[RMDB]
RNA sequence: GGGAACGACUCGAGUAGAGUCGAAAAGAUAUGGAGGUGGUGGGCAGCGAAGAACUCGGAAACGAGGGAGCUGCCACCCACCUCCUAAGUCAAAAGGGUCAUAACGUGUUCGCACGUUAUGACCCAAGGGUUUAAAAUGGUUCGCCAUUUUAAACCCAAAAGAAACAACAACAACAAC
Reactivity to DMS in 0.01 (KOAc 150mM, MgCl2 10mM, bicine 150mM(pH8.5), 24C), signal-to-noise 1, nucleotides 027 to 126: g010a020u000a300u000g000g010a000g040g010u000g000g010u000g000g000g050c000a000g030c000g010a090a150g050a120a180c000u000c000g010g000a120a110a250c000g010a020g000g000g000a080g010c000u000g010c020c010a000c040c010c000a010c010c000u010c000c020u010a000a050g010u040c070a050a100a100a050g010g000g000u000c000a000u000a010a000c010g040u000g010u020u000c250g010c010a000c000g000u000u000a010u000g000a000c000c000c010a010a020